The record gives the reactivity of an RNA of 207 nucleotides to 2A3.
[RMDB]
RNA sequence: GGGAACGACUCGAGUAGAGUCGAAAAACUUGGUUCGCCAAGUAAAAAAUCCUAAGUCUCGUGGGAGGGUCUGUUAUCGCGAGGAUCUCGGAAACGAGGGAGCGGAAUAAGACCCGAGGAUCACGAGAUAUGGAAAAAAUCAUCUUUCGAGAUGAAAGAAGUACCGCUUAUUCGUAAGCGGUACUUCAAAAGAAACAACAACAACAAC
Reactivity to 2A3 in 0.01 (KOAc 150mM, MgCl2 10mM, bicine 150mM(pH8.5), 24C), signal-to-noise 1, nucleotides 027 to 156: a040c010u000u000g000g010u060u050c070g010c110c000a000a010g050u080a000a160a000a000a000a000u100c040c010u050a180a000g080u000c000u000c000g000u000g020g020g000a010g040g010g000u000c010u010g100u050u030a300u220c000g010c000g010a050g010g020a010u010c000u000c000g000g070a120a080a020c010g000a000g000g000g030a000g000c020g000g090a020a040u150a280a150g000a000c000c000c000g000a000g000g000a000u000c000a000c020g000a010g000a000u010a030u040g000g060a000a000a000a080a030a050u110c000a010u020c020u110u130u080c300g180a060g010a080u060g030a110a020a100